[RMDB]
RNA sequence: GGGAACGACUCGAGUAGAGUCGAAAAACUGCAUCUACGGAUGCAGAACUACGUUCAUCCAAUUUAUUUGGACGCAUGAAAUGAGAAUAGGGAACGCGAUUCUCAUACGCAGGCUACGGCCUGCGAAAAAACUCCUUAUGCUUCGGCAUAAGGAGAAGUGAUGAGAAGUGUUCGCACUUCUCAUCACAAAAGAAACAACAACAACAAC
Reactivity to 2A3 in 0.01 (KOAc 150mM, MgCl2 10mM, bicine 150mM(pH8.5), 24C), signal-to-noise 2, nucleotides 027 to 156: a000c000u000g000c000a000u030c010u100a030c150g090g000a010u000g000c000a000g030a010a010c030u110a020c020g020u010u020c030a040u010c000c020a060a030u100u100u110a170u070u120u130g000g000a010c010g010c080a050u150g110a050a160a060u010g000a010g000a000a000u020a090g120g010g040a040a030c020g010c040g040a000u000u000c000u000c000a000u030a030c000g010c010a000g010g000c000u030a050c250g070g000c000c000u000g000c010g010a000a000a000a000a000a000c010u000c000c000u000u000a000u000g010c000u000u050c140g060g000c000a010u000a000a000g000g000a000g000a000a010